Background
Source: RMDB library OK2TRN, as collected in RNAgym. The record gives the reactivity of an RNA of 177 nucleotides to 2A3 and DMS. Reactivities are given for positions 27 through 126. DMS adducts were read by reverse transcription with MarathonRT. The DMS profile rests on 2,286 reads. For 2A3, 3,171 sequencing reads were counted. The RNA was probed in 150 mM KOAc, 10 mM MgCl2 and 150 mM bicine (pH 8.5) at 24 C.
[RMDB]
RNA sequence: GGGAACGACUCGAGUAGAGUCGAAAAGCGGGUCAACCGGCGGCUCGUGACGCGCUCGACUUCGCUACUGGGCACCCGCCGAUGGCUGCCGACGUGCACGCACACCAUCUCGCCGCGGUCACACAUGACUCCGAAUACAGUUCGCUGUAUUCGGAGUAAAAGAAACAACAACAACAAC
Reactivity to 2A3 in 0.01 (KOAc 150mM, MgCl2 10mM, bicine 150mM(pH8.5), 24C), signal-to-noise 2, nucleotides 027 to 126: g000c020g010g040g010u060c020a050a050c090c030g040g010c020g000g010c040u040c070g070u020g040a040c040g010c000g000c090u030c080g070a040c030u190u110c100g030c020u030a060c060u060g000g030g000c060a040c000c020c030g020c030c010g060a090u130g080g000c030u040g030c030c030g130a170c060g080u130g000c050a040c130g030c010a040c000a010c020c030a030u020c040u060c050g040c010c000g010c030g060g000u040c020a050c020a020c000a100u140g040
Reactivity to DMS in 0.01 (KOAc 150mM, MgCl2 10mM, bicine 150mM(pH8.5), 24C), signal-to-noise 3, nucleotides 027 to 126: g030c000g010g010g020u000c060a140a130c100c030g030g010c000g010g000c120u000c110g020u010g010a080c090g000c040g020c060u000c070g010a100c070u010u010c110g000c040u000a060c100u000g000g000g010c070a120c100c050c010g000c020c070g010a070u000g010g000c080u020g000c050c010g020a080c140g010u000g020c050a070c080g000c070a080c100a090c050c080a060u010c010u000c040g000c060c030g010c020g040g000u000c060a030c090a080c160a070u000g020